[RMDB]
RNA sequence: GGGAACGACUCGAGUAGAGUCGAAAACUCGAUUGACAACCAAACGAGAAUACCCAUCUUCUGGAUCCUGUCAGAGAAUGGCAGUUUGUCUCAUGGGAGCAGCAAUCCUACUCUCAAUCCAACACAAUGAUCACUCUUACUUCGGUAAGAGUGAUCAAAAAGAAACAACAACAACAAC
Reactivity to 2A3 in 0.01 (KOAc 150mM, MgCl2 10mM, bicine 150mM(pH8.5), 24C), signal-to-noise 1, nucleotides 027 to 126: c000u000c000g030a020u030u050g030a140c120a150a080c180c020a020a060a020c000g020a000g000a060a000u140a130c050c020c000a090u030c060u280u070c090u110g040g030a010u050c010c040u000g060u090c050a000g030a000g150a300a120u020g030g000c000a000g000u100u040u020g030u000c000u000c000a150u170g000g120g010a040g000c010a000g020c000a030a110u100c000c000u000a070c010u020c010u030c020a050a040u090c040c000a120a030c100a030c000a090a090
Reactivity to DMS in 0.01 (KOAc 150mM, MgCl2 10mM, bicine 150mM(pH8.5), 24C), signal-to-noise 1, nucleotides 027 to 126: c030u000c040g010a110u000u010g000a230c260a040a150c250c030a040a000a090c070g000a000g010a080a030u010a130c080c000c020a230u000c120u020u040c120u000g000g000a050u010c250c040u000g000u020c020a020g000a150g040a130a090u000g000g000c000a020g000u000u020u000g000u000c040u000c040a140u000g000g010g000a050g030c030a030g010c100a050a110u010c040c040u000a070c030u000c010u000c010a130a030u000c050c010a070a070c210a030c250a170a140